Structure probing data (DMS and 2A3) for a 177-nucleotide construct. The RNA was probed in 150 mM KOAc, 10 mM MgCl2 and 150 mM bicine (pH 8.5) at 24 C. For DMS, 7,085 sequencing reads were counted.
[RMDB]
RNA sequence: GGGAACGACUCGAGUAGAGUCGAAAAGUAUAACUGGAAUAAGAUUUGCACAUGGGGAAUGGUGGGGAUUAAAGACUGUAUCAAAUAAAAUUAGCUUUACACAUGGUUUAUAUCACUGUCCAGCAAACUUAUAUUAGGACUUCGGUCCUAAUAUAAGAAAAGAAACAACAACAACAAC
Reactivity to DMS in 0.01 (KOAc 150mM, MgCl2 10mM, bicine 150mM(pH8.5), 24C), signal-to-noise 4, nucleotides 027 to 126: g010u030a040u030a050a130c040u010g010g020a110a100u030a100a110g000a110u020u010u020g000c080a060c070a050u010g010g020g010g000a090a090u030g000g020u010g000g010g000g010a100u010u020a040a030a050g000a110c050u010g020u010a050u020c060a070a040a100u030a050a060a070a020u020u020a050g000c070u020u010u010a070c150a050c100a030u000g000g000u000u010u000a060u020a050u010c040a030c130u010g010u010c020c030a060g000c070a050a050a070
Reactivity to 2A3 in 0.01 (KOAc 150mM, MgCl2 10mM, bicine 150mM(pH8.5), 24C), signal-to-noise 6, nucleotides 027 to 126: g040u050a100u050a260a080c050u020g020g070a050a040u100a160a110g070a120u050u100u170g060c050a060c030a150u050g000g000g020g080a110a100u050g050g100u120g020g010g020g020a030u060u140a010a010a000g060a050c030u040g040u100a080u080c090a060a110a080u150a060a140a020a080u060u070a060g010c030u060u040u130a040c070a010c000a070u020g040g030u040u130u080a120u050a000u110c030a010c090u040g010u040c010c000a010g000c020a070a010a060